[RMDB]
RNA sequence: GGGAACGACUCGAGUAGAGUCGAAAAGACCGGGAUGGACGCACCGCUGGUGUACCAGUUGUUCCGCCAGGAGCAUAGCUGGGUAGCUACGUGCGGACGGGAUAAGUGCGGAAAGCAUCUAAGCAUGUAUUAUCUUAUGCUUCGGCAUAAGAUAAUAAAAAGAAACAACAACAACAAC
Reactivity to 2A3 in 0.01 (KOAc 150mM, MgCl2 10mM, bicine 150mM(pH8.5), 24C), signal-to-noise 2, nucleotides 027 to 126: g070a020c030c000g000g050g030a110u140g030g040a000c010g000c000a000c010c000g000c030u000g000g010u090g060u290a050c000c000a010g020u020u010g010u030u000c020c020g060c130c090a120g000g010a000g000c010a020u080a060g020c000u000g000g000g050u030a000g000c010u010a010c090g000u010g000c010g000g000a010c000g000g000g000a070u090a180a090g030u050g060c040g040g090a170a060a010g030c010a040u030c060u100a080a040g050c040a060u110g020
Reactivity to DMS in 0.01 (KOAc 150mM, MgCl2 10mM, bicine 150mM(pH8.5), 24C), signal-to-noise 9, nucleotides 027 to 126: g010a190c030c020g010g000g000a140u010g010g010a120c010g010c010a020c020c050g000c030u000g000g010u000g010u010a300c010c010a020g010u000u000g010u000u000c000c000g010c260c300a140g010g000a020g010c010a040u010a100g010c000u000g000g000g010u020a300g000c010u000a010c120g010u000g010c010g010g010a100c050g000g000g000a110u000a070a100g020u000g010c070g000g000a110a070a130g010c050a030u000c070u000a100a120g020c110a080u010g010

Chemical mapping of a 177-nucleotide RNA with 2A3 and DMS. DMS adducts were read by reverse transcription with MarathonRT. The data come from the RNA Mapping Database (RMDB), library OK2TRN.